[RMDB]
RNA sequence: GGGAACGACUCGAGUAGAGUCGAAAAAGUCGUUUUGCCGCAAGCGGUGACGGGAAGGUUGUGGCAAGGAAGGAAAGAGCUUUAAUGUCGGUCAAGAACUUCAUUGAGUUGAUCCCACUUGACAUCGACGGAUGUUAUCGUUCGCGAUAACAUCCGUAAAAGAAACAACAACAACAAC
Reactivity to 2A3 in 0.01 (KOAc 150mM, MgCl2 10mM, bicine 150mM(pH8.5), 24C), signal-to-noise 3, nucleotides 027 to 126: a000g050u060c040g000u000u050u110u140g060c000c000g020c030a050a030g060c030g080g000u270g090a130c070g030g000g040a000a140g150g020u130u100g030u080g010g000c010a000a080g100g030a090a070g070g030a030a050a010g110a060g010c050u060u120u230a110a010u110g040u030c000g020g010u060c040a020a070g030a060a080c020u100u060c040a160u010u240g000a010g020u040u040g070a120u000c000c030c000a030c000u030u140g050a060c020a090u100c070g020
Reactivity to DMS in 0.01 (KOAc 150mM, MgCl2 10mM, bicine 150mM(pH8.5), 24C), signal-to-noise 1, nucleotides 027 to 126: a040g020u000c000g010u000u000u060u000g060c060c000g000c060a120a150g080c000g020g000u000g000a060c070g020g000g010a100a150g000g000u010u020g000u040g020g000c000a010a050g020g000a140a130g080g000a030a130a080g020a120g010c010u000u000u000a030a040u040g010u000c050g030g060u000c080a000a110g000a090a060c090u000u000c090a040u020u030g000a010g000u010u000g000a210u010c000c020c030a200c150u000u000g000a000c050a010u000c000g010
The record gives the reactivity of an RNA of 177 nucleotides to 2A3 and DMS. DMS adducts were read by reverse transcription with MarathonRT. It was measured as part of the RMDB library OK1LIB.